[RMDB]
RNA sequence: GGGAACGACUCGAGUAGAGUCGAAAAUUAUUAAACACACUAACCAAAAAACUGUAAUUUCUAAGAUAUGUUUCAAAUUAAGGUGUUUUUGGUUAGUGUGCUGAAUAUAGUAGAUUCAUUGUACCCACCUCUUAGAAGACUUCGGUCUUCUAAGAGGAAAAGAAACAACAACAACAAC
Reactivity to 2A3 in 0.01 (KOAc 150mM, MgCl2 10mM, bicine 150mM(pH8.5), 24C), signal-to-noise 5, nucleotides 027 to 126: u050u020a030u050u150a030a080a000c000a000c000a000c000u000a000a000c000c000a010a000a000a000a000a000c040u060g010u060a050a000u020u060u050c100u190a110a040g030a190u130a150u300g130u100u210u090c050a020a020a000u010u030a000a080g190g040u100g220u040u020u000u000u000g000g000u000u000a000g000u000g010u000g000c010u010g030a040a020u100a020u030a100g190u040a020g040a160u040u100c080a030u080u190g050u110a090c000c000c010a030
Reactivity to DMS in 0.01 (KOAc 150mM, MgCl2 10mM, bicine 150mM(pH8.5), 24C), signal-to-noise 1, nucleotides 027 to 126: u050u000a000u010u000a090a040a180c000a000c020a000c030u000a000a020c010c010a010a000a010a020a060a020c010u020g000u000a010a000u010u010u000c120u030a010a070g010a110u020a080u080g000u000u030u010c160a000a000a020u000u000a050a230g000g000u000g000u010u000u000u010u000g000g000u000u000a010g010u000g000u000g010c100u000g000a040a050u030a000u000a020g000u050a100g000a110u020u010c090a100u040u020g010u010a130c000c000c020a170